This 177-nucleotide RNA was probed chemically with 2A3 and DMS. For 2A3, 2,418 sequencing reads were counted. The RNA was probed in 150 mM KOAc, 10 mM MgCl2 and 150 mM bicine (pH 8.5) at 24 C. Values cover nucleotides 27 to 126. For DMS, 2,633 sequencing reads were counted. 2A3 adducts were read by reverse transcription with SuperScript II with manganese.
RNA sequence: GGGAACGACUCGAGUAGAGUCGAAAAUCUGAGCUAUUCACUUUCAGGCAGUCCCAUGUGCCAGGAACCACAUCCAAAUUUCCUCCGUGGAUGGGAGUCUCAGGCUGCCUUAUCUCCUUGCAUGUCCGAACUCGUAGAUGUUCGCAUCUACGAGUUCAAAAGAAACAACAACAACAAC
Reactivity to 2A3 in 0.01 (KOAc 150mM, MgCl2 10mM, bicine 150mM(pH8.5), 24C), signal-to-noise 2, nucleotides 027 to 126: u000c010u030g030a010g020c040u070a080u240u220c060a060c160u120u140u090c040a010g000g020c010a030g070u020c030c020c010a040u120g050u020g010c060c040a030g060g010a040a050c010c040a110c010a130u000c030c020a030a140a170u100u100u040c020c050u020c050c050g030u030g020g020a030u000g000g030g020a050g030u000c020u020c050a030g030g000c020u030g010c000c020u090u060a120u030c040u000c010c000u040u020g040c040a080u100g070u020c050c080
Reactivity to DMS in 0.01 (KOAc 150mM, MgCl2 10mM, bicine 150mM(pH8.5), 24C), signal-to-noise 3, nucleotides 027 to 126: u010c040u020g010a070g030c120u010a050u000u000c120a070c100u000u000u010c110a090g020g000c050a060g010u000c030c030c050a100u020g010u010g010c040c030a100g010g000a070a100c080c040a130c050a020u000c030c040a020a090a130u000u000u000c020c020u000c090c120g020u010g000g010a030u000g000g020g000a130g010u000c050u000c090a050g010g010c040u010g020c030c010u000u000a070u000c040u000c020c030u000u000g010c090a060u000g020u000c120c080